[RMDB]
RNA sequence: GGGAACGACUCGAGUAGAGUCGAAAACAGGCCCAUAUAAAACAGCAGAAUGACCUCACAGCCGUGAAGGAAGGAGAGUGUGGGUAUCUGUGGGCACUGGCUCCUGGUGGCGCAGCAGCAAGUCCUUGGCCUCCCUUUGCAGCCCGGGGUUACUGCAGAUAUUUAUGAGGUUCGCCUCAUAAAUAUCAAAAGAAACAACAACAACAAC
Reactivity to 2A3 in 0.01 (KOAc 150mM, MgCl2 10mM, bicine 150mM(pH8.5), 24C), signal-to-noise 3, nucleotides 027 to 156: c040a040g070g050c000c000c030a030u130a030u090a070a080a000a040c030a030g080c010a010g050a160a150u110g030a070c020c000u040c010a080c020a060g020c010c000g050u060g070a030a030g050g020a030a010g060g000a080g010a050g050u070g020u090g060g030g050u080a110u090c020u030g030u060g030g050g020c010a050c060u060g120g000c040u070c020c050u110g090g000u040g040g050c030g000c050a070g000c010a030g050c030a140a000g090u060c020c000u040u060g120g000c010c010u030c020c000c020u010u030u020g000c030a020g030c000c050c080g010g000g000g000u010u010a030c010u000g000c010a030
This 207-nucleotide RNA was probed chemically with 2A3. It was measured as part of the RMDB library OK3TST. 2A3 adducts were read by reverse transcription with SuperScript II with manganese.